[RMDB]
RNA sequence: GGGAACGACUCGAGUAGAGUCGAAAAGCUCUGGAAUUGAGGCCCCUCUAACAAUAAUCCAACACUACUUCGCAGAGUAAUCUGCCGAAUCGUAGGAUGCCCAUUACUAUCUAUUUUUGGAGCAUCUAAAACUGUCAGUGCUUCGGCACUGACAGAAGUACACUAAAUUCUUCGGAAUUUAGUGUACAAAAGAAACAACAACAACAAC
Reactivity to DMS in 0.01 (KOAc 150mM, MgCl2 10mM, bicine 150mM(pH8.5), 24C), signal-to-noise 1, nucleotides 027 to 156: g020c020u000c050u000g060g000a070a130u010u000g020a010g050g000c050c020c020c000u000c050u030a160a130c060a050a080u020a070a100u010c050c030a090a060c030a140c010u010a030c020u000u000c050g050c030a010g010a130g000u000a140a060u010c020u020g020c040c010g000a040a040u020c100g040u010a120g010g000a070u010g000c030c030c070a080u010u000a090c090u000a120u010c080u000a200u000u000u010u010u010g010g010a090g050c000a080u010c010u010a000a050a140a100c040u000g040u000c000a010g030u000g000c000u000u000c270g040g020c000a000c020u000g020a010c000a000g010a010a110
Reactivity to 2A3 in 0.01 (KOAc 150mM, MgCl2 10mM, bicine 150mM(pH8.5), 24C), signal-to-noise 4, nucleotides 027 to 156: g030c000u000c010u030g030g070a130a040u150u030g020a030g010g010c000c000c030c010u100c080u090a110a090c080a090a070u180a030a040u050c030c020a040a050c060a030c080u050a010c000u030u010c010g000c010a000g000a010g040u080a070a170u020c000u020g040c080c030g020a020a020u060c070g010u030a040g100g000a000u010g000c000c000c000a010u030u020a060c030u070a090u190c040u080a200u140u110u000u020u020g020g000a130g030c010a000u000c010u040a000a010a040a110c010u000g000u000c000a000g000u000g000c000u050u050c090g060g000c000a000c000u000g000a000c000a000g000a000a000
Annotation:
The record gives the reactivity of an RNA of 207 nucleotides to DMS and 2A3. For 2A3, 2,562 sequencing reads were counted.